[RMDB]
RNA sequence: GGGAACGACUCGAGUAGAGUCGAAAACACCCGAGAGGCAUUUCUCGUCAAUCUAUAUCGCACUGUGCAAGCCAGCAGUCGCCUUCCCGUCGUCGACCCGCGCCGUUCCAGCUUCCACUCUUUCGCUCAUCCAUUCUAGGUUCGCCUAGAAUGGAUGAAAAGAAACAACAACAACAAC
Reactivity to DMS in 0.01 (KOAc 150mM, MgCl2 10mM, bicine 150mM(pH8.5), 24C), signal-to-noise 1, nucleotides 027 to 126: c160a100c020c020c000g050a090g000a120g020g010c070a100u000u000u010c010u000c040g020u010c080a080a080u010c060u000a130u010a030u000c120g000c050a070c090u040g000u000g030c000a110a140g000c070c010a120g010c040a040g030u000c060g010c040c050u000u000c010c000c000g000u000c000g000u010c030g000a100c030c000c000g040c090g010c080c010g010u000u000c010c040a120g000c080u000u000c040c010a090c130u000c070u000u000u000c060g020c210u000
Reactivity to 2A3 in 0.01 (KOAc 150mM, MgCl2 10mM, bicine 150mM(pH8.5), 24C), signal-to-noise 1, nucleotides 027 to 126: c050a040c010c020c000g010a070g000a040g040g070c060a090u130u120u000c030u000c030g100u060c040a030a090u040c040u100a150u030a060u260c040g030c020a050c060u070g070u120g070c060a070a030g000c010c000a020g000c010a020g060u060c050g010c030c000u030u050c050c030c000g070u070c040g000u000c020g090a080c000c000c010g020c000g000c000c010g010u060u000c000c000a020g020c020u070u070c000c010a080c070u050c040u000u090u060c060g000c020u010
Source: RMDB library RFMREP, as collected in RNAgym. This 177-nucleotide RNA was probed chemically with DMS and 2A3. High DMS reactivity at an A or C suggests that its Watson-Crick edge is free. For DMS, 840 sequencing reads were counted.